[RMDB]
RNA sequence: GGGAACGACUCGAGUAGAGUCGAAAAGAUAUGGAUCGCCAUGGUUCGUUGAAACCAUUCGGAAACGAAUGGUGGAGAACCGUGGACGAUCCUAAGUCAAAGCUCUUAUCGUUCGCGAUAAGAGCAACAAACAUUAGCUCUUCGGAGCUAAUGUUUGAAAAGAAACAACAACAACAAC
Reactivity to DMS in 0.01 (KOAc 150mM, MgCl2 10mM, bicine 150mM(pH8.5), 24C), signal-to-noise 4, nucleotides 027 to 126: g000a060u000a300u010g010g010a010u000c000g010c010c000a010u000g000g020u000u000c000g010u010u030g010a290a200a020c010c000a000u000u000c000g010g010a180a110a210c010g010a020a010u000g000g000u020g020g010a050g000a000a010c010c010g050u000g000g000a080c000g010a000u000c000c000u000a000a070g000u000c030a100a150a190g000c000u000c000u000u020a000u000c000g020u000u010c290g010c000g000a020u000a010a000g010a010g010c010a030a020
Reactivity to 2A3 in 0.01 (KOAc 150mM, MgCl2 10mM, bicine 150mM(pH8.5), 24C), signal-to-noise 3, nucleotides 027 to 126: g030a000u060a040u180g000g000a000u000c010g010c000c020a010u010g000g060u020u030c060g140u300u060g000a030a020a000c010c000a000u010u010c010g010g040a100a040a030c000g010a000a010u010g000g000u000g000g000a010g000a000a010c000c010g000u010g000g030a010c000g000a000u000c010c000u010a040a010g020u010c060a090a070a150g000c000u000c000u020u010a010u000c020g050u080u130c300g000c030g160a010u000a000a010g000a000g030c010a000a000